[RMDB]
RNA sequence: GGGAACGACUCGAGUAGAGUCGAAAAGAGACGCCCGGGAACAAGGAAAUAGAACAAGGUACGGUAGAAAAGAGCGAGCCUCCCGAUACGAGUUUGCCAGGACCUAUCAAGUUUGGAGUCAUCCGGGAUAUCGAUCAGUUCGCUGAUCGAAAAAGAAACAACAACAACAAC
Reactivity to 2A3 in 0.01 (KOAc 150mM, MgCl2 10mM, bicine 150mM(pH8.5), 24C), signal-to-noise 8, nucleotides 027 to 129: g060a000g000a010c060g030c000c000c000g000g010g000a050a030c050a040a020g040g030a060a030a030u150a080g040a040a020c050a060a040g040g000u070a020c060g020g020u060a030g120a050a170a050a010g050a010g020c040g000a010g020c000c010u010c000c000c000g020a030u040a100c040g000a020g040u020u070u050g040c020c020a030g020g030a040c000c010u030a040u070c020a060a070g030u020u060u050g070g010a030g000u020c010a020u000c010c010g010g000g010a020u070a030
Reactivity to DMS in 0.01 (KOAc 150mM, MgCl2 10mM, bicine 150mM(pH8.5), 24C), signal-to-noise 9, nucleotides 027 to 129: g000a080g020a130c160g030c030c010c050g020g000g030a080a040c080a060a050g000g010a050a060a070u000a090g000a050a040c070a080a100g000g040u040a050c110g030g020u020a080g000a070a060a090a100g020a080g000c050g010a080g030c040c020u000c020c040c040g030a100u040a070c160g030a080g000u010u010u010g040c030c020a090g000g000a000c030c010u000a020u020c060a050a110g030u020u020u020g000g000a090g020u010c060a080u000c020c010g010g000g000a080u000a080
Chemical mapping of a 170-nucleotide RNA with 2A3 and DMS. The DMS profile rests on 64,781 reads. Values cover nucleotides 27 to 129. DMS adducts were read by reverse transcription with MarathonRT. Source: RMDB library 15KLIB, as collected in RNAgym.